Structure probing data (2A3 and DMS) for a 177-nucleotide construct. For 2A3, 12,665 sequencing reads were counted. The reactions ran in a buffer of 150 mM KOAc, 10 mM MgCl2 and 150 mM bicine (pH 8.5), at 24 C. In probing experiments dimethyl sulfate is read out at A N1 and C N3, which are open when not base-paired. Reactivities are given for positions 27 through 126.

RNA sequence: GGGAACGACUCGAGUAGAGUCGAAAAUCUUUGGCUUUCGAGCCAAAGAGUGGGUGCAAUGUCCUUUAAGCACCAUACACGGAAAAACCGUGAAAGGACAAAAAAAUCACAGUUUCGACUGUGAUAAUAUUGUUACUACAUUCGUGUAGUAACAAUAAAAAGAAACAACAACAACAAC
Reactivity to 2A3 in 0.01 (KOAc 150mM, MgCl2 10mM, bicine 150mM(pH8.5), 24C), signal-to-noise 6, nucleotides 027 to 126: u010c000u010u000u000g010g000c000u080u070u100c240g100a000g010c000c020a000a000a000g010a010g010u120g090g010g000u010g000c050a170a300u130g010u010c010c010u040u060u100a060a020g010c000a000c000c000a010u050a010c010a000c000g010g020a230a130a040a140a080c010c000g000u000g000a020a010a000g000g000a010c000a030a130a000a000a000a000a000u010c000a000c000a010g000u020u060u170c180g090a010c000u010g000u010g010a000u020a000a040
Reactivity to DMS in 0.01 (KOAc 150mM, MgCl2 10mM, bicine 150mM(pH8.5), 24C), signal-to-noise 5, nucleotides 027 to 126: u000c000u000u000u000g010g000c000u000u000u010c150g010a020g030c000c000a000a000a000g000a020g020u010g020g000g020u000g020c010a200a110u010g020u000c000c000u000u000u000a080a170g010c000a020c000c010a120u000a180c010a020c010g000g000a150a160a100a170a150c010c000g000u000g000a040a060a040g000g010a020c010a010a000a030a100a100a110a040u000c010a000c000a010g010u000u000u010c240g010a030c000u000g020u000g000a000u000a020a080